Annotation:
An RNA of 177 nucleotides, treated with DMS and 2A3 and read out base by base. The RNA was probed in 150 mM KOAc, 10 mM MgCl2 and 150 mM bicine (pH 8.5) at 24 C. The DMS profile rests on 981 reads. Source: RMDB library RFM100, as collected in RNAgym. Values are in units of 0.01, from 0 to 300, in steps of 10.
RNA sequence: GGGAACGACUCGAGUAGAGUCGAAAACUGCAGCGAUGCAGGCCGCAGAGAAAUGGCCCAACCGACUGUUUAUCAAAAACACAGCACUCUGCAAAGACGCAAGUCGAAGUAUAGGGUGUGACACGUGUGGAUUGAAAGGCUUCGGCCUUUCAAUCCAAAAAGAAACAACAACAACAAC
Reactivity to DMS in 0.01 (KOAc 150mM, MgCl2 10mM, bicine 150mM(pH8.5), 24C), signal-to-noise 1, nucleotides 027 to 126: c040u000g000c010a050g000c160g000a040u000g000c030a000g000g000c000c000g000c110a050g000a050g000a190a210a030u000g000g000c190c020c050a300a070c160c020g000a060c140u000g000u000u070u040a190u090c100a050a090a090a040a150c000a000c130a200g000c000a000c000u000c000u000g000c000a000a090a300g000a000c090g010c230a000a130g000u000c010g000a020a230g000u000a050u050a050g000g000g000u000g010u000g000a130c140a000c160g000u000g080
Reactivity to 2A3 in 0.01 (KOAc 150mM, MgCl2 10mM, bicine 150mM(pH8.5), 24C), signal-to-noise 1, nucleotides 027 to 126: c020u040g000c010a000g000c000g050a050u060g060c030a020g000g040c010c000g000c010a000g020a000g040a030a020a090u200g040g040c030c000c000a020a080c000c000g220a130c060u040g110u130u050u040a160u190c150a080a050a000a000a000c000a000c050a000g040c010a000c000u000c000u000g000c000a000a100a000g080a000c030g000c090a000a110g030u000c000g050a000a040g040u030a000u050a060g000g000g000u020g020u090g050a030c050a000c150g060u170g000